The record gives the reactivity of an RNA of 177 nucleotides to DMS and 2A3. Reactivities are given for positions 27 through 126. The 2A3 profile rests on 3,393 reads. Source: RMDB library RFMREP, as collected in RNAgym.
RNA sequence: GGGAACGACUCGAGUAGAGUCGAAAAGGGGCAAAUCCUUAUUUGCUAUGACAUAACUACAUUUGACUACUCAAAAUCAUUUGUUAUCACAAGCCCGACUACAUCAGUGACAUUAAGAAAUAGAGGACACAACUAUGAUGUUCGCAUCAUAGUUGUGAAAAGAAACAACAACAACAAC
Reactivity to DMS in 0.01 (KOAc 150mM, MgCl2 10mM, bicine 150mM(pH8.5), 24C), signal-to-noise 3, nucleotides 027 to 126: g020g000g000g030c080a060a050a080u000c100c060u000u000a090u000u000u000g010c040u010a060u000g010a120c120a030u020a050a100c150u000a040c060a040u000u000u000g030a050c070u000a050c110u020c110a130a060a110a120u000c020a020u000u000u010g000u000u000a080u000c030a060c120a060a110g020c010c000c020g010a100c090u000a070c100a050u000c050a060g010u000g000a060c050a050u010u010a060a050g000a070a050a040u000a050g010a080g000g020a240
Reactivity to 2A3 in 0.01 (KOAc 150mM, MgCl2 10mM, bicine 150mM(pH8.5), 24C), signal-to-noise 4, nucleotides 027 to 126: g060g010g000g020c030a040a030a030u060c020c020u100u110a100u040u030u030g030c030u060a060u170g030a020c030a090u090a070a040c040u080a010c060a070u060u050u040g040a040c030u070a050c030u060c120a060a100a040a160u020c030a040u040u020u060g030u030u050a060u070c030a030c010a080a030g010c000c010c000g030a030c040u100a030c020a070u070c040a010g030u010g040a020c010a040u070u120a110a010g080a060a090a010u100a010g110a040g070g010a010

The RNA was probed in 150 mM KOAc, 10 mM MgCl2 and 150 mM bicine (pH 8.5) at 24 C.